An RNA of 177 nucleotides, treated with DMS and 2A3 and read out base by base. The data come from the RNA Mapping Database (RMDB), library OK1LIB. Reactivities are rounded to 0.1 and cut off at 0 and 3. For 2A3, 165,698 sequencing reads were counted. Conditions: 150 mM KOAc, 10 mM MgCl2 and 150 mM bicine (pH 8.5), 24 C.
[RMDB]
RNA sequence: GGGAACGACUCGAGUAGAGUCGAAAACGGGUGUAUCACUGAAUGGUCUAUUCCUAGUGAUACAGCCUUAAUUGGCGCAUCGAGUACGUGCCUGGCUCGGCUACGAUCAGCCGGGUUGCAUGUGCCAAGUGUGUGUACGUUUCGACGUGCACGCGCUAAAAGAAACAACAACAACAAC
Reactivity to DMS in 0.01 (KOAc 150mM, MgCl2 10mM, bicine 150mM(pH8.5), 24C), signal-to-noise 9, nucleotides 027 to 126: c290g010g000g010u000g010u010a000u000c000a010c000u000g000a070a060u020g000g020u020c300u040a130u020u010c010c200u030a010g010u000g010a010u000a000c000a010g000c000c000u000u000a040a140u000u010g010g000c010g020c030a100u000c010g000a030g000u000a090c020g010u000g000c000c040u000g000g000c010u010c010g000g000c010u000a110c260g010a140u040c160a020g010c000c010g010g010g000u000u000g000c100a060u020g010u010g000c060c080a080
Reactivity to 2A3 in 0.01 (KOAc 150mM, MgCl2 10mM, bicine 150mM(pH8.5), 24C), signal-to-noise 9, nucleotides 027 to 126: c030g000g010g050u010g000u000a000u000c000a000c010u050g140a130a140u180g070g070u100c120u270a110u090u100c010c020u020a000g000u000g000a000u000a000c000a000g060c000c000u030u030a080a090u030u030g010g000c020g000c050a150u010c020g010a010g010u070a190c010g000u020g010c000c000u000g010g000c000u000c010g010g000c010u070a080c130g200a230u160c100a010g000c000c000g000g000g000u000u050g020c030a080u140g040u100g080c030c040a050